[RMDB]
RNA sequence: GGGAACGACUCGAGUAGAGUCGAAAAUGACAGUGUAUAGGCGCGAAAGCGUCUAGCAAUUAGCAAUGACUGUAUGCUAAUUGACUAUUGUGAAAACAAUAGGAUGCUGUCUAACAGUCAUUGAUACGAUCUUGUUGUAUUUCGAUAUGGCAAGAUCAAAAGAAACAACAACAACAAC
Reactivity to 2A3 in 0.01 (KOAc 150mM, MgCl2 10mM, bicine 150mM(pH8.5), 24C), signal-to-noise 9, nucleotides 027 to 126: u060g000a000c000a000g000u000g010u010a010u000a010g000g000c000g000c010g040a050a050a040g000c000g000u000c000u000a000g000c000a000a000u000u000a000g000c000a000a030u050g000a000c000u000g000u000a010u030g000c000u000a000a000u000u000g000a000c000u000a000u000u010g000u010g080a040a030a010a010c000a000a000u000a000g000g000a000u000g000c000u000g000u000c000u000a010a000c000a000g000u000c000a010u030u220g080a040u040a060c080
Reactivity to DMS in 0.01 (KOAc 150mM, MgCl2 10mM, bicine 150mM(pH8.5), 24C), signal-to-noise 8, nucleotides 027 to 126: u010g010a010c000a000g010u000g010u000a030u000a000g010g000c000g000c000g000a120a110a150g010c000g010u000c000u000a000g000c000a000a000u000u000a010g010c000a040a140u010g000a010c000u000g010u000a190u010g010c000u010a010a000u000u000g000a080c000u000a000u000u000g010u010g000a140a070a130a010c000a010a000u000a000g010g000a010u000g000c000u000g000u000c000u000a080a030c000a000g000u000c000a140u020u040g000a120u030a090c210